[RMDB]
RNA sequence: GGGAACGACUCGAGUAGAGUCGAAAAGCAGUUCCAGAGUGUGAGGACUCUGAACUCGAAGGUAGAUGACCUCCUCACAGGUCAAAGUGAUAUUGAUAGGCAAGUAUCAGGAUCACACUACCGACAUACUUGUCUAUGUCAACUCGAGGAACUGAGACACUACGUUCUUCUUCGGAAGAACGUAGUGAAAAGAAACAACAACAACAAC
Reactivity to 2A3 in 0.01 (KOAc 150mM, MgCl2 10mM, bicine 150mM(pH8.5), 24C), signal-to-noise 7, nucleotides 027 to 156: g060c010a000g000u020u000c020c010a020g000a010g030u040g010u020g010a010g020g010a020c020u000c030u090g060a100a070c040u040c110g080a130a070g070g020u100a040g010a130u060g030a020c000c010u020c010c010u030c010a030c030a020g020g040u030c050a070a060a020g060u060g050a030u040a040u130u110g020a010u020a010g060g040c090a080a030g060u010a010u030c040a040g000g050a030u110c070a030c030a030c140u110a080c010c000g020a020c010a020u010a000c000u070u070g020u040c010u010a010u030g030u030c020a040a040c040u010c030g060a130g000g010a010a000c010u010g010a000g020a030
Reactivity to DMS in 0.01 (KOAc 150mM, MgCl2 10mM, bicine 150mM(pH8.5), 24C), signal-to-noise 3, nucleotides 027 to 156: g010c030a040g030u010u000c020c010a120g000a090g050u000g010u010g010a130g020g020a100c050u000c020u000g010a120a080c020u000c040g010a150a130g020g010u010a070g020a300u010g010a040c000c020u000c020c040u010c060a090c110a090g030g000u000c030a080a050a150g020u010g020a060u000a010u010u000g030a040u000a110g000g040c100a100a110g010u000a010u000c010a130g010g010a110u010c110a110c090a270c090u000a100c010c010g000a180c160a050u000a010c020u000u000g020u000c010u000a000u000g020u010c000a050a080c050u000c000g010a130g030g000a060a030c020u000g010a210g010a160